Background
This 207-nucleotide RNA was probed chemically with 2A3 and DMS. For 2A3 the reverse transcriptase was SuperScript II with manganese.

[RMDB]
RNA sequence: GGGAACGACUCGAGUAGAGUCGAAAAAGUGCAGUAGGUACGCCUAGUGCACAUUCCAGGACAUACUGCUGAGGAUGUCAAAAAUGCAGUUGGAGUCCUCAACUGGAUAGGCUACGGCCUAUCCAGAAAAAGACUUGGUUGUUCGCAACCAAGUCAAGUCGUGUAUAUUGUUCGCAAUAUACACGACAAAAGAAACAACAACAACAAC
Reactivity to 2A3 in 0.01 (KOAc 150mM, MgCl2 10mM, bicine 150mM(pH8.5), 24C), signal-to-noise 2, nucleotides 027 to 156: a000g020u010g000c020a070g100u000a020g020g010u050a040c170g150c010c000u090a090g160u000g020c000a000c000a000u000u020c010c010a000g010g010a000c020a040u190a030c010u000g040c010u040g020a050g180g120a300u230g300u300c140a050a070a020a010a010u090g000c000a010g000u040u030g070g070a080g040u000c000c020u030c050a050a090c010u000g000g000a000u000a010g010g000c000u020a020c270g000g030c030c000u000a000u000c000c000a000g000a010a010a000a000a000g000a010c000u000u000g020g000u010u010g000u030u090c150g010c080a000a010c010c020a010a000g000u000c000a010a020
Reactivity to DMS in 0.01 (KOAc 150mM, MgCl2 10mM, bicine 150mM(pH8.5), 24C), signal-to-noise 2, nucleotides 027 to 156: a110g000u010g040c010a030g000u000a020g000g030u000a080c300g060c020c000u000a030g010u000g040c000a000c000a110u000u020c020c020a140g000g030a100c030a070u010a060c000u000g020c120u020g020a080g000g010a120u010g000u010c020a050a060a080a130a140u000g030c040a090g000u000u010g000g010a250g020u000c010c010u000c020a050a140c000u000g000g000a040u000a010g020g030c000u020a110c300g060g020c010c000u000a000u010c000c000a000g010a000a050a090a160a170g010a010c000u000u030g000g010u010u000g010u000u000c250g020c020a040a020c000c000a010a000g000u000c000a010a090
Source information: DMS adducts were read by reverse transcription with MarathonRT. Values are in units of 0.01, from 0 to 300, in steps of 10. The data come from the RNA Mapping Database (RMDB), library M2RFPK. The reactions ran in a buffer of 150 mM KOAc, 10 mM MgCl2 and 150 mM bicine (pH 8.5), at 24 C. The DMS profile rests on 3,861 reads.